Conditions: 150 mM KOAc, 10 mM MgCl2 and 150 mM bicine (pH 8.5), 24 C.
The record gives the reactivity of an RNA of 177 nucleotides to 2A3 and DMS.
RNA sequence: GGGAACGACUCGAGUAGAGUCGAAAAACUGCGGAACGCUUCCUUGUGAUCCCACAAGGAACAACUCGUGUCAAUGGACUUUUCCGUUAAGCGAGGAACGAGUAGGAAAAGGAAACGUUCCCCAAUCGAAUAAUUCAUCGUUCGCGAUGAAUUAUUCAAAAGAAACAACAACAACAAC
Reactivity to 2A3 in 0.01 (KOAc 150mM, MgCl2 10mM, bicine 150mM(pH8.5), 24C), signal-to-noise 3, nucleotides 027 to 126: a000c030u060g040c030g010g030a050a010c030g000c030u010u020c000c000u000u020g090u060g130a180u060c060c050c000a010c000a000a040g020g040a020a030c000a010a000c000u010c010g040u040g140u130c050a020a020u030g050g000a040c090u150u090u280u000c020c000g010u040u030a040a030g000c000g010a000g000g000a020a030c010g030a030g040u050a040g000g050a030a120a000a060g060g000a040a010a020c010g000u010u000c000c010c000c000a030a080u150c060
Reactivity to DMS in 0.01 (KOAc 150mM, MgCl2 10mM, bicine 150mM(pH8.5), 24C), signal-to-noise 3, nucleotides 027 to 126: a060c090u010g050c300g020g010a030a020c050g000c090u010u000c000c000u000u010g020u010g010a140u000c030c050c000a150c040a080a290g000g030a050a050c210a100a160c010u000c000g000u010g010u000c300a040a000u000g000g000a080c300u030u000u020u000c010c000g010u000u010a100a240g000c000g000a040g000g010a090a100c020g000a300g020u000a070g050g000a010a100a030a030g000g000a030a020a050c020g000u000u000c000c000c020c090a040a040u010c210
2A3 adducts were read by reverse transcription with SuperScript II with manganese.